[RMDB]
RNA sequence: GGGAACGACUCGAGUAGAGUCGAAAACAGAACUAAUUCGUUAGUUCUGGCAUAUAACCUUCACCAAUUAGGUUCAAAUAAGUCGUAAAAAUAAAAAUAAAACGGGGUCUGCAUUCGUGCAGACCAAGUACAAGAUAUGCUUCGGCAUAUCUUGUACAAAAGAAACAACAACAACAAC
Reactivity to DMS in 0.01 (KOAc 150mM, MgCl2 10mM, bicine 150mM(pH8.5), 24C), signal-to-noise 1, nucleotides 027 to 126: c000a000g000a000a000c000u000a000a010u000u000c140g010u010u000a030g000u000u000c010u000g000g000c180a050u000a130u020a100a070c020c000u020u000c120a200c110c100a040a100u030u000a020g030g020u000u000c210a130a050a130u010a050a120g010u000c010g010u000a000a080a040a110a150u000a030a060a060a050a090u000a040a020a100a080c100g020g000g000g000u000c000u000g040c010a000u000u000c170g060u000g000c000a010g010a010c010c010a000a020
Reactivity to 2A3 in 0.01 (KOAc 150mM, MgCl2 10mM, bicine 150mM(pH8.5), 24C), signal-to-noise 2, nucleotides 027 to 126: c000a010g000a010a020c010u000a010a030u080u140c150g060u050u010a000g000u020u000c000u000g000g000c030a100u240a030u010a070a040c000c000u070u060c100a100c110c040a070a090u100u060a110g030g010u010u060c040a030a050a260u180a260a050g060u080c030g050u120a000a060a040a070a140u170a030a090a100a000a030u140a040a090a180a020c030g210g020g020g060u010c000u000g030c000a010u010u100c110g060u010g000c000a000g000a000c000c000a000a000

Annotation: The record gives the reactivity of an RNA of 177 nucleotides to DMS and 2A3. 2A3 is a SHAPE reagent: it acylates the 2'-hydroxyl of flexible nucleotides of all four kinds. DMS adducts were read by reverse transcription with MarathonRT. The reactions ran in a buffer of 150 mM KOAc, 10 mM MgCl2 and 150 mM bicine (pH 8.5), at 24 C. It was measured as part of the RMDB library M2PK50. For 2A3, 1,412 sequencing reads were counted. Values cover nucleotides 27 to 126.